[RMDB]
Chemical mapping of a 207-nucleotide RNA with 2A3. For 2A3, 857 sequencing reads were counted. Conditions: 150 mM KOAc, 10 mM MgCl2 and 150 mM bicine (pH 8.5), 24 C. Source: RMDB library OK3TST, as collected in RNAgym. For 2A3 the reverse transcriptase was SuperScript II with manganese.

RNA sequence: GGGAACGACUCGAGUAGAGUCGAAAAUUAUUACUUGUUUCAGUGACAGGUGCAGUGAUGAGAGGUGAUGGGGUCAUGAAGACGGGGAGCCCAUCAGAGCCCAGGGCUUGAAAUCUGACUGUAGUGUGCAUGAAGGUCUAGGUGUUAGGAGGGAAGACCUACGUACCCAUUUCGAUGGGUACGUAGGAAAAGAAACAACAACAACAAC
Reactivity to 2A3 in 0.01 (KOAc 150mM, MgCl2 10mM, bicine 150mM(pH8.5), 24C), signal-to-noise 1, nucleotides 027 to 156: u170u110a040u060u100a070c050u030u000g040u000u080u020c080a070g030u100g070a020c040a070g020g050u020g000c030a020g050u000g080a150u070g020a020g000a000g040g030u050g020a030u020g010g000g000g010u020c020a050u080g060a020a020g030a010c000g000g000g020g020a000g020c000c020c000a020u030c010a000g030a010g030c010c010c020a030g000g010g000c040u010u020g030a050a060a010u010c040u070g060a060c030u050g010u060a030g020u060g010u040g120c050a070u110g060a080a010g030g000u000c040u060a020g010g000u020g040u030u070a030g040g030a000g080g000g020a030a000g000a010